An RNA of 207 nucleotides, treated with DMS and 2A3 and read out base by base. For DMS, 12,518 sequencing reads were counted. DMS adducts were read by reverse transcription with MarathonRT. It was measured as part of the RMDB library M2RFPK.
RNA sequence: GGGAACGACUCGAGUAGAGUCGAAAAGGAAUUGGAAGGUCAUCCUUCACAGGAUCGUGUGGAAUUCCUGCUCGGGGCGGAAGCAUUAAAACCAUUCGAGCUAGUCAAUGCGUGGCGUGUCUCUCCGGUGUUUCUCUGGACUUCGGUCCAGAGAAAACAGGACAUAUACCUUCGGGUAUAUGUCCUGAAAAGAAACAACAACAACAAC
Reactivity to DMS in 0.01 (KOAc 150mM, MgCl2 10mM, bicine 150mM(pH8.5), 24C), signal-to-noise 4, nucleotides 027 to 156: g010g000a060a060u020u000g020g000a080a070g000g020u000c060a130u000c020c010u000u000c140a100c100a110g010g000a040u010c050g010u010g020u000g010g010a100a110u000u000c010c020u000g020c020u000c040g010g000g020g030c030g020g000a080a100g000c050a100u000u000a050a090a120a130c020c010a130u000u000c050g010a060g030c030u000a120g020u000c050a050a090u000g000c030g050u010g000g020c050g030u020g020u000c020u000c020u010c030c010g010g010u000g000u000u000u000c000u000c000u000g000g000a030c010u000u000c300g060g000u000c000c000a010g000a010g000a000a000a020a130
Reactivity to 2A3 in 0.01 (KOAc 150mM, MgCl2 10mM, bicine 150mM(pH8.5), 24C), signal-to-noise 6, nucleotides 027 to 156: g030g010a020a040u110u090g040g060a060a020g050g040u130c040a080u120c020c000u090u100c060a070c030a060g040g020a040u070c060g030u060g010u050g090g050a050a060u050u040c010c000u010g010c030u030c020g010g000g020g000c050g030g020a050a010g010c020a020u070u220a040a050a020a040c020c000a020u060u100c070g020a010g030c060u060a030g080u050c070a060a060u070g030c030g060u030g020g000c020g010u010g050u020c010u010c000u010c080c010g050g010u040g050u030u030u000c000u000c000u000g000g000a000c000u020u060c260g070g000u000c000c000a000g000a000g000a000a000a000a000